[RMDB]
RNA sequence: GGGAACGACUCGAGUAGAGUCGAAAAGAUAUGGACUGUGCUAGCGUCGAAUGUCGGAAACGACAUACCGACGCUUGGACCACACAUGUCCUAAGUCAAAAGCUUAUCUAGUUCGCUAGAUAAGCAACUCAGCUAUCAUGUUCGCAUGAUAGCUGAGAAAAGAAACAACAACAACAAC
Reactivity to DMS in 0.01 (KOAc 150mM, MgCl2 10mM, bicine 150mM(pH8.5), 24C), signal-to-noise 3, nucleotides 027 to 126: g010a040u010a300u010g000g000a010c030u020g010u020g010c080u000a030g010c020g030u000c030g020a140a010u000g020u050c020g000g010a110a060a120c020g010a010c010a000u010a050c230c000g030a000c020g020c000u020u020g010g010a120c190c220a300c010a020c020a010u000g000u000c000c010u000a060a110g000u010c030a060a060a120a100g000c000u000u000a000u000c000u000a000g010u000u000c290g030c010u000a010g000a020u000a010a000g010c000a030a050
Reactivity to 2A3 in 0.01 (KOAc 150mM, MgCl2 10mM, bicine 150mM(pH8.5), 24C), signal-to-noise 1, nucleotides 027 to 126: g030a010u100a050u170g020g000a010c030u010g020u010g020c050u030a010g000c010g000u010c000g000a060a000u010g000u000c020g070g000a050a070a100c030g010a010c020a000u040a090c070c000g000a010c010g000c000u010u000g000g020a000c060c020a060c000a000c000a070u300g000u000c000c000u030a170a010g030u020c030a070a090a000a140g020c000u000u010a010u000c010u010a010g030u050u070c260g060c150u020a010g020a000u000a000a000g000c010a000a020